[RMDB]
RNA sequence: GGGAACGACUCGAGUAGAGUCGAAAACACUACCAUCAAGCGAUACUGCUGCUUACGAGAAACAAGGGAUGCUGCGCACGCUGAUUAAAGUCACGUUCGGUUAUCCUGCGAUUUUUGACGAGGUUCGUUCGCAUGCAGUGUUCGCACUGCAUGCGAAAAAAGAAACAACAACAACAAC
Reactivity to 2A3 in 0.01 (KOAc 150mM, MgCl2 10mM, bicine 150mM(pH8.5), 24C), signal-to-noise 3, nucleotides 027 to 126: c100a020c020u100a110c060c010a060u070c070a100a030g010c000g030a040u060a140c040u060g040c000u000g010c000u020u040a050c010g020a010g090a060a070a030c030a020a000g000g000g020a010u010g000c040u030g000c060g000c010a020c000g010c130u020g010a050u060u200a160a100a010g020u020c000a000c000g020u010u030c020g000g010u020u120a030u030c000c020u020g000c010g070a070u030u060u050u060u100g080a090c010g010a020g000g040u040u100c000g010
Reactivity to DMS in 0.01 (KOAc 150mM, MgCl2 10mM, bicine 150mM(pH8.5), 24C), signal-to-noise 3, nucleotides 027 to 126: c100a130c080u000a100c030c030a120u020c090a120a100g050c010g000a040u020a030c060u040g040c030u000g010c050u010u000a050c080g000a070g020a110a060a090c050a030a300g000g020g010a020u010g010c030u020g010c300g010c010a040c030g010c090u010g000a030u000u010a130a080a180g000u020c050a040c060g000u000u010c000g000g010u000u030a030u000c010c000u010g000c300g010a050u000u000u020u020u010g030a120c030g000a140g010g000u010u000c030g020